[RMDB]
RNA sequence: GGGAACGACUCGAGUAGAGUCGAAAAAAAACGCUGGGUAAGCGGUACGACGAAGGCUCUCGAUUCAAUCCUGAAGCGCGCACGGGAUUGACAGGAUUGAGCCAGAGUACACGCUUACCUGUGCUGAAGCGCGCACGGCAACCGAAAGGUGCGAAAACCAUGUUUCAAGCUUCGGCUUGAAACAUGGAAAAGAAACAACAACAACAAC
Reactivity to 2A3 in 0.01 (KOAc 150mM, MgCl2 10mM, bicine 150mM(pH8.5), 24C), signal-to-noise 1, nucleotides 027 to 156: a040a000a000a000c010g000c000u000g000g020g000u000a000a000g020c010g000g000u000a000c020g300a080c050g010a030a000g010g020c000u000c000u010c020g180a240u300u070c000a000a010u000c000c000u000g030a130a020g000c000g040c010g000c000a010c010g000g000g040a010u020u070g100a120c160a090g070g100a170u150u180g000a050g020c000c010a000g000a020g000u020a000c300a050c020g000c000u000u000a000c000c000u000g010u020g000c010u000g010a040a010g020c010g000c000g010c000a010c000g000g000c010a000a010c000c000g020a110a050a010g000g010u010g010c050g020a090a000a000a100
Structure probing data (2A3) for a 207-nucleotide construct. For 2A3 the reverse transcriptase was SuperScript II with manganese. Values cover nucleotides 27 to 156. Conditions: 150 mM KOAc, 10 mM MgCl2 and 150 mM bicine (pH 8.5), 24 C. The 2A3 profile rests on 1,109 reads.